[RMDB]
RNA sequence: GGGAACGACUCGAGUAGAGUCGAAAAAAGAUAUGGAAACUGCGCACGACCGAGGAUCGCAACCUACCCACCGGAUCGGAAACGAUCCGAGGGUUGCGGGAGGUUCACGCCAGUUUCCUAAGUCAAACUUAUACCCAAUGUUCGCAUUGGGUAUAAGAAAAGAAACAACAACAACAAC
Reactivity to 2A3 in 0.01 (KOAc 150mM, MgCl2 10mM, bicine 150mM(pH8.5), 24C), signal-to-noise 3, nucleotides 027 to 126: a000a000g130a080u170a070u170g000g000a000a010a010c000u010g010c060g000c270a100c230g030a000c040c000g050a300g070g000a010u020c000g010c020a000a010c000c010u170a210c080c040c040a020c050c000g010g000a010u000c000g010g030a090a050a060c020g000a000u000c000c000g010a000g010g000g000u000u000g000c000g000g000g000a010g000g000u140u140c100a050c180g020c010c000a010g000u000u000u000c000c000u010a110a020g060u010c070a070a030a090
Reactivity to DMS in 0.01 (KOAc 150mM, MgCl2 10mM, bicine 150mM(pH8.5), 24C), signal-to-noise 5, nucleotides 027 to 126: a080a070g010a040u000a300u000g000g000a020a010a010c010u000g000c130g040c000a180c300g000a010c000c010g000a100g020g000a040u010c010g000c000a010a000c010c000u010a040c080c040c100a300c150c010g000g000a010u000c000g010g020a150a090a220c010g000a010u000c000c000g000a050g010g000g000u000u010g010c000g000g000g010a020g010g020u000u000c130a030c120g000c030c010a010g010u000u000u000c000c000u010a010a070g010u000c030a110a110a180
Conditions: 150 mM KOAc, 10 mM MgCl2 and 150 mM bicine (pH 8.5), 24 C. Structure probing data (2A3 and DMS) for a 177-nucleotide construct.